The record gives the reactivity of an RNA of 177 nucleotides to 2A3 and DMS. For DMS the reverse transcriptase was MarathonRT. The RNA was probed in 150 mM KOAc, 10 mM MgCl2 and 150 mM bicine (pH 8.5) at 24 C. 2A3 adducts were read by reverse transcription with SuperScript II with manganese. It was measured as part of the RMDB libraries RFM100 and RFMREP.
RNA sequence: GGGAACGACUCGAGUAGAGUCGAAAAUGAACUAUAAUUGUUCAUUGAAGUCAUUGAUGCAAACUCCUUGGUCACACACACAUACGGCGCGGAAGGCGUGUUUGCUGACGUUUCCAUUCCCUUGUUUACACUAGAGUACAUUCGUGUACUCUAGUGUAAAAGAAACAACAACAACAAC
Reactivity to 2A3 in 0.01 (KOAc 150mM, MgCl2 10mM, bicine 150mM(pH8.5), 24C), signal-to-noise 9, nucleotides 027 to 126: u010g010a000a000c020u030a030u210a300a220u230u150g000u010u000c000a000u000u030g050a060a010g010u020c040a040u040u190g050a050u110g030c030a020a020a030c010u030c010c010u020u050g080g020u090c010a030c010a000c010a000c010a000c010a130u110a180c100g020g020c050g010c030g120g090a040a010g050g010c070g050u110g030u030u030u050g000c010u010g010a010c020g020u020u060u000c010c010a010u020u030c000c000c000u040u110g060u040u040u000
Reactivity to DMS in 0.01 (KOAc 150mM, MgCl2 10mM, bicine 150mM(pH8.5), 24C), signal-to-noise 5, nucleotides 027 to 126: u000g010a010a000c000u000a120u020a120a150u000u000g010u000u000c000a020u000u000g000a070a120g000u000c060a070u010u000g000a120u000g030c030a040a040a060c040u000c020c030u000u000g020g020u000c030a100c100a050c080a090c100a040c150a100u000a090c080g000g030c060g020c060g000g010a080a080g000g000c240g010u010g000u000u000u010g000c010u000g000a220c210g000u000u000u000c030c010a300u010u000c000c000c010u000u000g020u000u000u000